An RNA of 177 nucleotides, treated with DMS and 2A3 and read out base by base. DMS adducts were read by reverse transcription with MarathonRT. Conditions: 150 mM KOAc, 10 mM MgCl2 and 150 mM bicine (pH 8.5), 24 C. 2A3 adducts were read by reverse transcription with SuperScript II with manganese. For DMS, 960 sequencing reads were counted. The data come from the RNA Mapping Database (RMDB), library M2PK50.
RNA sequence: GGGAACGACUCGAGUAGAGUCGAAAACUUCGGUAGUUCGCUACCGAAGAAAAGACAGACUACGCAACUGUCAAAAACACAACAUAAGUGUAAAAGCGUAGAAAAGUUCCCACUUCGGUGGGAACAACUGUUAUCAUUGCUUCGGCAAUGAUAACAGAAAAGAAACAACAACAACAAC
Reactivity to DMS in 0.01 (KOAc 150mM, MgCl2 10mM, bicine 150mM(pH8.5), 24C), signal-to-noise 1, nucleotides 027 to 126: c010u000u000c000g010g000u010a000g040u000u030c240g020c010u000a000c000c020g010a000a000g000a030a110a080a240g000a020c020a000g000a090c000u010a010c000g000c000a100a020c010u010g000u030c000a070a050a050a140a000c000a000c010a060a210c180a100u000a160a110g000u000g010u000a110a110a030a100g000c000g000u000a030g000a180a120a120a090g030u000u000c000c000c000a010c010u000u010c050g000g030u000g030g000g000a000a000c000a030a050
Reactivity to 2A3 in 0.01 (KOAc 150mM, MgCl2 10mM, bicine 150mM(pH8.5), 24C), signal-to-noise 1, nucleotides 027 to 126: c000u000u000c000g000g000u000a000g010u020u100c260g000c090u000a000c000c000g000a000a010g020a020a040a000a000g000a000c010a010g010a020c020u020a000c000g010c030a210a050c050u010g000u000c010a000a000a020a070a000c040a010c030a070a160c080a220u190a300a130g030u030g000u010a040a130a020a020g000c000g000u000a010g050a000a080a000a030g010u010u000c000c010c000a000c010u020u040c200g060g020u010g010g020g020a000a000c000a000a000